[RMDB]
RNA sequence: GGGAACGACUCGAGUAGAGUCGAAAAUGUGUGUGAGGGUUGGCCUCAUUAACCAGCGCUAACAAGCCGUGCAAAUGCUCUGAUUGGGCAGCUUUUAUUGGAUAGUACCAGGCCCUUAGCAGGAUACCAGACUUGACAAAUUCGUUUGUCAAGUCUGAAAAGAAACAACAACAACAAC
Reactivity to DMS in 0.01 (KOAc 150mM, MgCl2 10mM, bicine 150mM(pH8.5), 24C), signal-to-noise 7, nucleotides 027 to 126: u010g010u010g020u010g020u010g010a040g020g010g010u000u020g010g000c130c040u000c100a030u010u010a080a080c040c030a060g000c100g020c030u010a070a080c140a090a120g000c050c050g020u000g010c070a070a060a110u010g000c020u000c020u010g000a140u030u030g010g000g010c030a070g010c070u000u000u010u020a090u020u030g000g000a110u010a040g010u010a100c030c020a070g010g000c030c010c050u000u010a090g000c050a070g000g000a100u020a070c150
Reactivity to 2A3 in 0.01 (KOAc 150mM, MgCl2 10mM, bicine 150mM(pH8.5), 24C), signal-to-noise 8, nucleotides 027 to 126: u100g040u010g010u000g010u030g020a030g020g040g020u160u110g070g040c000c010u040c010a010u030u040a010a030c030c000a020g020c020g000c060u050a060a030c030a110a010g020c030c020g020u050g030c030a080a060a100u090g010c000u000c020u080g170a230u110u170g000g020g010c020a030g010c030u070u070u060u080a180u100u080g060g010a040u030a120g020u040a100c020c020a030g020g020c010c000c010u000u000a010g000c030a020g030g040a010u040a100c020